[RMDB]
RNA sequence: GGGAACGACUCGAGUAGAGUCGAAAACAACGGCGGCAAUGGUGGCAGCGUCGAGCACACUGGCGCUACCGGCUCCUCUGCGAGCGGCGGCAAUGGUGCCACCGGCGGGAACGGCGGGGUCGGUGCGGCCGUUGUACCAGUUCGCUGGUACAACGGCAAAAGAAACAACAACAACAAC
Reactivity to 2A3 in 0.01 (KOAc 150mM, MgCl2 10mM, bicine 150mM(pH8.5), 24C), signal-to-noise 4, nucleotides 027 to 126: c030a010a000c000g030g000c000g030g030c030a060a120u190g070g010u070g110g040c040a020g000c040g060u070c030g020a020g020c040a020c020a020c100u070g070g000c020g000c030u090a040c000c000g020g000c000u020c000c000u050c000u050g080c060g070a110g100c000g000g010c000g000g000c030a030a220u300g200g000u190g070c010c010a020c000c010g110g030c020g000g060g000a060a030c000g000g000c040g000g000g000g010u000c000g010g000u010g020c010g040
Reactivity to DMS in 0.01 (KOAc 150mM, MgCl2 10mM, bicine 150mM(pH8.5), 24C), signal-to-noise 1, nucleotides 027 to 126: c100a020a130c090g000g000c020g000g000c090a130a080u070g000g000u030g010g000c010a010g000c010g000u020c040g000a140g010c050a080c070a070c050u070g000g000c050g000c040u030a060c020c000g000g030c010u000c000c000u020c050u000g000c070g000a300g010c000g020g020c040g040g030c010a170a120u030g020g000u000g000c000c030a000c000c000g000g040c020g010g050g010a150a150c000g040g000c080g010g000g020g060u000c000g020g000u000g040c050g000

Chemical mapping of a 177-nucleotide RNA with 2A3 and DMS. For 2A3, 2,483 sequencing reads were counted. The DMS profile rests on 1,683 reads. The reactions ran in a buffer of 150 mM KOAc, 10 mM MgCl2 and 150 mM bicine (pH 8.5), at 24 C. 2A3 adducts were read by reverse transcription with SuperScript II with manganese.